Conditions: 150 mM KOAc, 10 mM MgCl2 and 150 mM bicine (pH 8.5), 24 C. Chemical mapping of a 177-nucleotide RNA with 2A3 and DMS. The DMS profile rests on 14,105 reads. High 2A3 reactivity points to a flexible backbone, as in loops and unpaired stretches.
RNA sequence: GGGAACGACUCGAGUAGAGUCGAAAAGAGUACUCAUGUGAGUCUGUGAAGGCCUACGUCCAAAACAGACGCACACACACACACAGACGGAGGCGUAGGUCGAGUCUGAAACAUGUGUACGAAGAAAGGGUUAACUAUAGUUCGCUAUAGUUAACCCAAAAGAAACAACAACAACAAC
Reactivity to 2A3 in 0.01 (KOAc 150mM, MgCl2 10mM, bicine 150mM(pH8.5), 24C), signal-to-noise 6, nucleotides 027 to 126: g130a020g010u020a010c010u010c010a010u010g020u020g040a060g140u010c030u060g120u040g110a210a070g010g010c000c010u020a010c020g020u030c010c030a070a050a060a030c050a050g090a120c030g070c010a040c000a000c000a000c000a000c000a000c010a000c020a000g070a070c050g090g030a050g020g000c000g000u010a010g040g000u010c030g020a020g050u030c020u070g010a070a050a000c010a010u010g010u000g000u020a010c070g000a050a050g090a120a100a000
Reactivity to DMS in 0.01 (KOAc 150mM, MgCl2 10mM, bicine 150mM(pH8.5), 24C), signal-to-noise 6, nucleotides 027 to 126: g000a260g010u010a020c010u000c000a030u000g020u000g000a100g020u000c060u000g000u000g030a160a200g010g010c000c020u010a020c030g020u000c000c150a100a080a140a080c250a110g000a090c090g010c060a010c050a020c110a040c060a040c120a060c090a020c040a040g000a090c030g000g000a100g000g000c000g010u020a010g000g010u000c010g000a080g010u010c010u010g010a080a120a050c010a020u000g000u010g000u000a020c010g010a080a120g010a090a090a120